[RMDB]
RNA sequence: GGGAACGACUCGAGUAGAGUCGAAAAAUCAGCCUUCGUUCUGUAAACGGGGUUGGAUCCGACUCUCAUAGGCUCUCAAACCCAACUCCUACUCAAUACGUCCUCGUCGUACAGAACGGUAACAUGUAAAACGAAGGCUGCUUCGGCAGCCUUCGAACAGACGUUAUCAGUUCGCUGAUAACGUCUGAAAAGAAACAACAACAACAAC
Reactivity to 2A3 in 0.01 (KOAc 150mM, MgCl2 10mM, bicine 150mM(pH8.5), 24C), signal-to-noise 2, nucleotides 027 to 156: a000u040c040a040g050c020c020u070u190c040g000u020u000c070u100g040u120a080a070a030c030g000g000g000g040u030u040g010g000a000u030c040c040g090a090c010u020c020u040c050a120u100a100g010g070c030u020c000u030c060a050a080a160c010c010c000a030a030c030u040c000c020u030a080c020u040c090a110a160u090a170c020g080u070c000c040u030c030g020u000c030g000u010a030c000a020g010a050a000c030g000g020u090a070a030c060a050u170g110u210a060a050a060a050c010g000a000a000g010g000c000u000g000c000u020u030c140g070g000c010a000g000c000c000u010u000c000g000a000a000
Reactivity to DMS in 0.01 (KOAc 150mM, MgCl2 10mM, bicine 150mM(pH8.5), 24C), signal-to-noise 1, nucleotides 027 to 156: a120u010c050a120g000c030c010u000u000c000g020u010u010c050u030g000u010a120a120a050c020g020g090g020g050u010u020g000g010a070u010c070c030g010a070c030u000c030u000c030a130u000a130g040g030c040u000c030u000c090a080a140a040c030c040c030a080a040c010u010c040c030u000a070c050u010c070a100a110u010a110c060g020u010c020c010u000c030g040u000c010g020u030a060c030a020g000a020a030c000g020g000u000a070a070c100a080u000g010u000a050a070a100a240c010g000a060a000g020g000c000u010g000c030u010u000c280g060g010c030a000g000c000c000u030u010c000g000a020a060